Source: RMDB library OK1LIB, as collected in RNAgym. The record gives the reactivity of an RNA of 177 nucleotides to 2A3. The reactions ran in a buffer of 150 mM KOAc, 10 mM MgCl2 and 150 mM bicine (pH 8.5), at 24 C. For 2A3, 593 sequencing reads were counted.
RNA sequence: GGGAACGACUCGAGUAGAGUCGAAAAUGAGCUUAACAGUCAUUUGACUGUUCAAACACUUUUUAUGAGAGUUUGAUCCUGGCUCAGGACGAACGCUGGCGGCGUGCCUAAUACAUGCAAGUCGAACUACCCGCUGACGAUUCGUCGUCAGCGGGUAAAAAGAAACAACAACAACAAC
Reactivity to 2A3 in 0.01 (KOAc 150mM, MgCl2 10mM, bicine 150mM(pH8.5), 24C), signal-to-noise 2, nucleotides 027 to 126: u070g010a000g000c000u000u000a050a000c000a000g000u010c030a300u060u110u300g000a000c000u010g000u000u010c000a020a030a000c020a030c010u110u120u050u170u300a070u250g020a020g000a000g020u000u000u060g090a160u010c000c010u000g060g000c000u000c040a000g000g020a000c030g000a030a000c000g050c080u070g010g000c020g000g000c040g030u050g000c000c000u100a180a100u220a140c040a030u160g080c040a080a060g180u060c030g000a040a110c000